[RMDB]
RNA sequence: GGGAACGACUCGAGUAGAGUCGAAAAACUCUAAGACUAGGCUACUUGGUCUUGAUGGCAGUGUUAGUGGCAAGGAAGAGGACACGGAGAGGCACACGGUUGAGGAUGUCAAUCGCAACAUGCACACGGCCACUAUAACUUUCGAGUUAUAGUGGCCAAAAGAAACAACAACAACAAC
Reactivity to DMS in 0.01 (KOAc 150mM, MgCl2 10mM, bicine 150mM(pH8.5), 24C), signal-to-noise 2, nucleotides 027 to 126: a120c060u000c060u020a040a050g000a050c020u000a120g010g000c080u010a070c040u020u050g000g000u000c020u000u000g000a040u070g000g060c100a030g060u000g030u020u010a090g010u000g000g000c070a070a100g000g030a060a060g010a090g030g000a090c130a040c020g020g000a020g000a060g000g010c040a040c090a040c040g000g030u000u030g020a070g020g000a060u020g000u010c090a000a030u020c090g060c110a070a020c120a090u020g000c100a060c080a050c190
Reactivity to 2A3 in 0.01 (KOAc 150mM, MgCl2 10mM, bicine 150mM(pH8.5), 24C), signal-to-noise 3, nucleotides 027 to 126: a000c070u100c060u080a100a020g000a000c010u010a050g010g120c030u070a020c010u100u070g030g020u010c000u010u070g030a100u130g040g000c040a020g050u010g000u080u140a020g000u030g020g060c030a100a020g050g030a040a040g040a020g070g000a010c030a010c070g090g010a060g020a070g080g030c040a000c000a000c070g000g000u020u050g010a030g090g090a080u100g040u040c000a010a060u030c060g000c010a010a120c010a150u130g060c010a020c010a000c090